[RMDB]
RNA sequence: GGGAACGACUCGAGUAGAGUCGAAAAACUGGUAGCAUUGAGGAGAAGAUGUCCUACUUUGAUGGGUUUCGUGAGAAGAUUCUGGGCAUUGUCAAAUCCUUUCUCGGAGAAAGCAUACCAGGUUUGAGGAGGUAAUGAAGUUCGCUUCAUUACCUCCAAAAGAAACAACAACAACAAC
Reactivity to DMS in 0.01 (KOAc 150mM, MgCl2 10mM, bicine 150mM(pH8.5), 24C), signal-to-noise 3, nucleotides 027 to 126: a070c000u010g000g020u000a020g000c030a210u000u000g000a300g000g000a200g020a070a070g000a020u000g010u000c010c000u000a040c040u000u000u000g010a170u010g000g030g020u020u000u020c020g020u000g000a280g010a020a020g000a140u020u020c140u000g000g000g000c010a020u000u000g000u010c120a060a100a120u000c040c030u000u010u000c030u000c040g000g010a290g020a050a060a080g010c020a100u010a010c000c000a020g000g000u010u000u000g010a300
Reactivity to 2A3 in 0.01 (KOAc 150mM, MgCl2 10mM, bicine 150mM(pH8.5), 24C), signal-to-noise 1, nucleotides 027 to 126: a010c010u010g030g000u010a000g000c010a030u010u140g030a020g020g040a040g020a050a040g000a020u010g020u000c000c000u010a060c000u030u020u080g100a100u110g050g050g130u100u160u300c070g030u120g050a070g020a070a030g020a080u050u130c100u210g020g030g000c050a010u050u030g030u060c000a060a030a150u090c020c000u000u060u020c040u020c020g070g030a130g020a040a090a020g030c000a040u000a030c000c000a010g030g060u010u100u040g050a030